This 207-nucleotide RNA was probed chemically with DMS and 2A3. For 2A3, 4,211 sequencing reads were counted. DMS adducts were read by reverse transcription with MarathonRT.

RNA sequence: GGGAACGACUCGAGUAGAGUCGAAAAGGAUAGGGUUCGCCCUAUCCAAAAAGAUAUGGAUCGCAAGUCACUCGAUAAGAUGUGGUCGGAAACGACCAUACAUCUUUUGACGAGUGUCACCGAUCCUAAGUCAAAAAUCGCACCUUCGGGUGCGAAAUCCUUCUCUAAUGUUCGCAUUAGAGAAGGAAAAAGAAACAACAACAACAAC
Reactivity to DMS in 0.01 (KOAc 150mM, MgCl2 10mM, bicine 150mM(pH8.5), 24C), signal-to-noise 2, nucleotides 027 to 156: g010g000a010u000a020g000g050g060u000u010c300g040c040c000c000u010a000u000c000c000a010a040a070a110a130g000a150u000a250u010g000g020a030u000c010g000c050a120a240g040u000c010a030c000u010c020g030a180u000a030a030g000a020u010g060u000g000g030u010c000g010g020a100a080a280c020g000a000c000c010a070u000a070c020a040u000c000u000u010u000u010g010a170c130g010a020g000u000g000u010c020a090c120c010g040a050u000c030c000u000a010a080g020u010c030a050a020a080a080a070u010c010g030c000a000c000c000u000u000c300g050g010g020u000g020c000g010a000a020a020
Reactivity to 2A3 in 0.01 (KOAc 150mM, MgCl2 10mM, bicine 150mM(pH8.5), 24C), signal-to-noise 4, nucleotides 027 to 156: g020g000a000u010a000g050g040g020u050u050c230g150c000c000c040u050a060u050c000c050a000a020a000a000a010g040a020u030a010u060g010g000a000u010c010g020c060a100a230g020u020c000a000c000u010c010g060a060u010a090a010g000a000u000g000u010g030g000u000c010g010g030a070a030a020c010g000a010c010c010a020u090a050c020a010u000c010u010u030u050u110g160a090c030g010a000g010u020g000u000c010a000c010c040g000a000u000c000c000u020a080a010g010u010c030a000a020a000a050a180u190c190g000c000a000c150c000u060u070c280g080g010g010u000g000c000g000a010a000a000